[RMDB]
RNA sequence: GGGAACGACUCGAGUAGAGUCGAAAAUCACAGUCAACACCACCCACACCAACAUCACCGGCAACAUUAGAAGCAUGUUUAGCUUCGCUACCUGAUGCUGGCUAUACAAAGCAAGUGGGAGACAAAAGACGUAAUAGUGAUUCGUCACUAUUACGUCAAAAGAAACAACAACAACAAC
Reactivity to 2A3 in 0.01 (KOAc 150mM, MgCl2 10mM, bicine 150mM(pH8.5), 24C), signal-to-noise 9, nucleotides 027 to 126: u060c010a020c030a080g050u030c020a050a070c040a080c100c000a020c010c010c000a010c010a020c020c020a010a040c010a040u050c010a010c050c030g040g000c030a060a030c020a130u110u140a070g010a020a000g010c020a030u110g170u200u200u210a020g000c010u010u000c010g000c010u040a060c020c030u020g010a010u020g000c000u000g000g000c010u050a020u030a170c100a060a110a030g080c030a100a080g040u020g010g020g010a050g010a010c020a010a100a010a010
Reactivity to DMS in 0.01 (KOAc 150mM, MgCl2 10mM, bicine 150mM(pH8.5), 24C), signal-to-noise 8, nucleotides 027 to 126: u010c060a110c160a100g010u000c040a080a080c120a200c090c070a200c010c010c030a070c090a210c180c020a030a030c060a030u010c070a070c110c080g000g000c030a040a050c090a090u000u000a170g000a000a010g020c000a120u020g020u010u000u010a150g010c000u000u000c050g010c090u000a030c100c040u000g010a040u000g010c010u000g010g010c080u000a060u010a120c220a080a050a080g000c130a100a100g020u010g010g000g000a120g010a040c070a060a050a080a100